An RNA of 177 nucleotides, treated with DMS and 2A3 and read out base by base. For 2A3 the reverse transcriptase was SuperScript II with manganese. DMS (dimethyl sulfate) methylates the pairing face of unpaired adenines and cytosines.

RNA sequence: GGGAACGACUCGAGUAGAGUCGAAAAGUGAGCCACCGCCGACGCUGUUUGAUUACCUGCCUGCCGAUGGGCUGCUGGUCGUCGAUGAAUCUCACGUCACCAUUCCACAAAUUGGCGGCAUGUAUCGUCGUCCUUGUUUCUUCGGAAACAAGGACGAAAAAGAAACAACAACAACAAC
Reactivity to DMS in 0.01 (KOAc 150mM, MgCl2 10mM, bicine 150mM(pH8.5), 24C), signal-to-noise 2, nucleotides 027 to 126: g020u000g000a070g030c260c030a040c060c000g020c050c010g010a080c070g020c130u000g050u010u010u010g000a070u010u000a010c020c040u000g000c070c020u000g000c010c060g020a070u040g010g050g010c080u000g020c090u000g000g000u010c060g030u010c030g030a050u000g020a050a080u010c140u000c050a040c020g020u000c040a070c100c040a110u020u010c060c020a070c160a070a130a110u000u010g000g010c020g000g020c040a020u000g010u010a040u000c100g000
Reactivity to 2A3 in 0.01 (KOAc 150mM, MgCl2 10mM, bicine 150mM(pH8.5), 24C), signal-to-noise 1, nucleotides 027 to 126: g030u070g000a000g010c010c020a000c030c020g040c010c010g000a020c040g010c060u030g040u210u070u160g110a080u070u170a010c000c000u020g050c000c020u000g010c020c000g130a110u200g030g120g050c080u080g010c020u010g020g030u040c030g010u030c040g020a090u080g050a050a110u090c020u010c080a020c000g010u000c010a000c000c020a070u130u050c040c020a100c050a070a200a010u090u060g010g030c000g000g010c040a060u170g060u100a080u090c040g050